Chemical mapping of a 177-nucleotide RNA with DMS and 2A3. For 2A3 the reverse transcriptase was SuperScript II with manganese. DMS adducts were read by reverse transcription with MarathonRT.
RNA sequence: GGGAACGACUCGAGUAGAGUCGAAAACUGGCCGACGAUUAUGGGUACAGUCGGCUGGACACAAUGCUGCGUGCAGCUAGCCUGACCCAGAUCUAGAUAAGCACUUUGCACAGAAGGACUUAAUCCAACAGUCUUUGGAGUUCGCUCCAAAGACUGUAAAAGAAACAACAACAACAAC
Reactivity to DMS in 0.01 (KOAc 150mM, MgCl2 10mM, bicine 150mM(pH8.5), 24C), signal-to-noise 1, nucleotides 027 to 126: c000u040g000g090c040c000g000a150c120g000a050u010u080a080u000g000g030g090u000a040c060a210g000u000c000g000g000c000u000g040g000a070c110a080c190a090a050u000g000c000u040g050c050g000u000g030c050a020g000c000u000a020g000c000c000u000g000a150c000c000c000a000g060a100u000c090u000a160g000a050u040a040a070g000c210a020c090u000u000u000g080c200a090c120a080g030a020a060g050g000a090c050u030u000a010a040u000c000c100a060
Reactivity to 2A3 in 0.01 (KOAc 150mM, MgCl2 10mM, bicine 150mM(pH8.5), 24C), signal-to-noise 3, nucleotides 027 to 126: c050u040g140g000c000c050g040a050c060g020a030u090u050a200u300g050g010g010u060a230c020a020g000u020c030g000g030c010u000g020g030a010c000a000c010a110a210u240g000c060u040g010c010g020u020g000c000a000g000c010u040a010g000c000c000u000g020a020c000c000c000a010g000a000u000c020u000a000g040a080u080a080a130g000c020a070c010u040u090u100g040c050a080c010a080g080a050a000g050g030a050c010u040u040a080a010u040c060c020a060